[RMDB]
RNA sequence: GGGAACGACUCGAGUAGAGUCGAAAAGUUAACUAUGGCAGCUCUCUGAAUGGAGCAGAAUAGCGUAGUGGUUAAGGACAUGACUGGGUUGGAAUCGAGCUCUAUCACUAAUUAGCUGACCUUGGACUCCUGCAAGUAUGUUCGCAUACUUGCAGGAAAAAGAAACAACAACAACAAC
Reactivity to DMS in 0.01 (KOAc 150mM, MgCl2 10mM, bicine 150mM(pH8.5), 24C), signal-to-noise 1, nucleotides 027 to 126: g010u000u000a090a090c030u000a040u010g000g030c150a050g000c030u000c030u000c180u010g000a210a080u020g000g000a040g020c050a050g000a030a060u000a100g000c060g020u000a070g020u000g010g000u020u000a030a060g000g010a130c130a030u020g000a050c020u000g000g010g010u000u000g010g020a080a130u000c030g000a120g000c060u000c030u000a050u000c040a020c070u020a070a100u000u000a030g000c070u000g000a100c020c040u000u010g000g020a130c180